Source information: An RNA of 177 nucleotides, treated with 2A3 and read out base by base.
RNA sequence: GGGAACGACUCGAGUAGAGUCGAAAACACAAAAAGCUGAUGCUGCCGGAGUGGUCAUCCGUCAGUAUUUCAGGAGUAAAUUCGACAUUAUUCAGAAAGACGACCUCCGUCCAGUAAACAAACAAAACCGAUGAUUUUACUUCGGUAAAAUCAUCGGAAAAGAAACAACAACAACAAC
Reactivity to 2A3 in 0.01 (KOAc 150mM, MgCl2 10mM, bicine 150mM(pH8.5), 24C), signal-to-noise 3, nucleotides 027 to 126: c100a000c050a020a200a010a020a110g060c030u040g000a000u000g000c000u000g020c050c000g040g000a040g000u080g000g180u110c010a030u020c000c000g000u000c000a010g010u010a040u040u080u040c000a000g000g060a030g020u100a000a160a080u030u070c010g020a000c080a060u070u030a020u070u150c050a050g120a160a160a020g020a030c030g030a040c000c000u030c010c010g020u000c020c000a030g050u140a080a220a090c110a070a020a020c020a020a140a020a050
2A3 adducts were read by reverse transcription with SuperScript II with manganese. Conditions: 150 mM KOAc, 10 mM MgCl2 and 150 mM bicine (pH 8.5), 24 C.